[RMDB]
Chemical mapping of a 207-nucleotide RNA with 2A3. Values cover nucleotides 27 to 156. For 2A3 the reverse transcriptase was SuperScript II with manganese. The data come from the RNA Mapping Database (RMDB), library ARCHII.

RNA sequence: GGGAACGACUCGAGUAGAGUCGAAAAGUUCGGUUCCUCGGAUCGGUUCUGAUGUGGGCAUGUUUCUGAGCUGCCCAGUCCAAGCUGUGAGUAAUUAGUGUUGAGUUGAGCGAAGGCUUGGCUCAUGCAGGUUCUAGAGUCGGAGGGUAAUGCGUGAGACUCCAAUAUGCUUCGGCAUAUUGGAGUCAAAAGAAACAACAACAACAAC
Reactivity to 2A3 in 0.01 (KOAc 150mM, MgCl2 10mM, bicine 150mM(pH8.5), 24C), signal-to-noise 1, nucleotides 027 to 156: g050u030u040c020g010g070u010u010c000c010u010c020g000g010a120u040c040g010g070u120u000c010u090g110a100u060g080u040g070g000g010c120a060u090g060u000u050u060c080u100g120a050g030c030u020g010c000c010c010a000g020u060c040c010a050a060g010c020u040g020u090g110a090g050u080a110a110u070u140a050g060u040g080u120u010g020a050g030u010u000g010a010g020c020g110a170a030g140g000c000u000u040g000g010c000u000c010a020u120g070c070a000g080g030u130u080c040u060a040g000a040g090u020c060g000g070a030g010g000g070u060a060a000u170g010c020g000u040g100a060